[RMDB]
RNA sequence: GGGAACGACUCGAGUAGAGUCGAAAAGAAUCACCGUACCUAUUUAGGUUUACGCUCCAAGAUCGGUGGAUAGCAGCCCUAUCAAUAUCUAGGAGAACUGUGUUAUGUUUAGAAGAUUAGGUAGUCUAUUACACAGCCAUGUUCGCAUGGCUGUGAAGUACAAACCAUACUUCGGUAUGGUUUGUACAAAAGAAACAACAACAACAAC
Reactivity to 2A3 in 0.01 (KOAc 150mM, MgCl2 10mM, bicine 150mM(pH8.5), 24C), signal-to-noise 3, nucleotides 027 to 156: g040a060a050u090c000a010c010c000g040u050a030c010c010u060a100u250u200u300a070g010g000u040u020u040a020c030g000c030u000c030c020a040a000g010a040u030c010g040g000u020g060g000a020u050a030g060c060a000g000c010c000c000u060a070u150c030a060a080u030a010u140c010u010a020g010g010a010g010a030a050c070u050g000u000g040u160u090a080u060g060u020u010u050a090g010a180a080g020a160u130u060a100g100g080u050a040g090u000c030u040a140u060u100a040c000a000c000a010g000c000c000a010u010g010u040u020c080g040c110a000u000g000g000c000u000g000u000g000a000a000
Reactivity to DMS in 0.01 (KOAc 150mM, MgCl2 10mM, bicine 150mM(pH8.5), 24C), signal-to-noise 2, nucleotides 027 to 156: g010a130a110u020c010a110c000c030g030u000a040c010c020u000a210u010u010u010a030g000g050u000u000u000a080c050g030c010u010c040c050a090a140g000a060u000c070g010g020u000g010g000a140u000a100g000c080a220g020c070c090c040u000a160u000c020a020a110u000a110u000c050u010a140g000g010a130g020a090a100c020u020g010u020g000u000u010a140u000g000u000u000u000a070g010a100a070g030a110u000u010a050g020g010u000a170g000u000c050u000a120u010u000a210c010a010c000a020g000c000c010a000u000g010u000u000c300g000c020a000u000g010g010c000u020g010u000g030a000a110